[RMDB]
RNA sequence: GGGAACGACUCGAGUAGAGUCGAAAAAUACCAGAAGUGAGACCUGCAGUGCGGCAGAUGAGGAGCGUGCAGACCGUCCGCACCGCAUCGCAGCCUUCUAUUAGUCCACAAUCUCCAUUAGAACAGCGUUGGUCAUGAUUUUCGAAUCAUGACCAACAAAAGAAACAACAACAACAAC
Reactivity to DMS in 0.01 (KOAc 150mM, MgCl2 10mM, bicine 150mM(pH8.5), 24C), signal-to-noise 2, nucleotides 027 to 126: a070u020a080c060c030a210g010a040a140g030u010g000a120g010a060c180c040u000g020c040a050g010u000g030c020g020g010c130a100g010a100u000g010a070g010g000a040g060c060g010u010g030c050a100g000a180c160c130g010u000c070c000g000c050a100c040c060g030c000a010u010c080g000c070a050g000c010c030u000u000c040u000a100u010u000a070g000u000c020c000a030c100a060a100u000c080u000c080c030a080u000u000a090g000a150a080c100a090g000c170
Reactivity to 2A3 in 0.01 (KOAc 150mM, MgCl2 10mM, bicine 150mM(pH8.5), 24C), signal-to-noise 1, nucleotides 027 to 126: a000u050a000c030c020a030g060a220a020g070u050g030a120g060a100c000c050u030g000c040a020g020u010g030c000g000g000c020a060g020a120u060g070a040g080g010a090g020c060g000u070g030c060a000g050a200c000c130g010u010c030c000g060c000a010c000c000g010c000a010u020c030g000c040a010g000c000c000u000u060c000u000a040u070u080a030g020u000c010c020a030c010a080a120u000c020u050c080c010a090u100u100a090g080a220a010c040a070g000c070